Chemical mapping of a 177-nucleotide RNA with 2A3.
Source: RMDB library OK1LIB, as collected in RNAgym.
Conditions: 150 mM KOAc, 10 mM MgCl2 and 150 mM bicine (pH 8.5), 24 C.
As a SHAPE reagent, 2A3 marks flexible, mostly unpaired nucleotides at the ribose 2'-OH.

RNA sequence: GGGAACGACUCGAGUAGAGUCGAAAAGACCAGGGCUGCCUUCCCAAUCGUCUUUGGUUACGACGACAUCUUUCAAACAUUCGGUUUGCCAUAUCCGACGAUAUCCGAAUGCCCACGCGGCUACUGGCUAGGUCACGUGCUUCGGCACGUGACCUAGAAAAGAAACAACAACAACAAC
Reactivity to 2A3 in 0.01 (KOAc 150mM, MgCl2 10mM, bicine 150mM(pH8.5), 24C), signal-to-noise 2, nucleotides 027 to 126: g060a010c010c000a000g000g000g040c000u000g020c000c000u020u030c030c000c000a000a020u030c040g030u000c020u250u120u130g170g030u190u180a060c100g000a000c000g060a000c010a050u030c120u050u170u070c220a170a090a000c000a010u020u020c030g190g000u120u100u220g060c020c000a130u120a000u070c010c050g080a080c130g040a060u000a000u000c000c010g010a020a000u000g010c050c000c030a050c100g000c030g000g010c000u100a130c000u240g030g000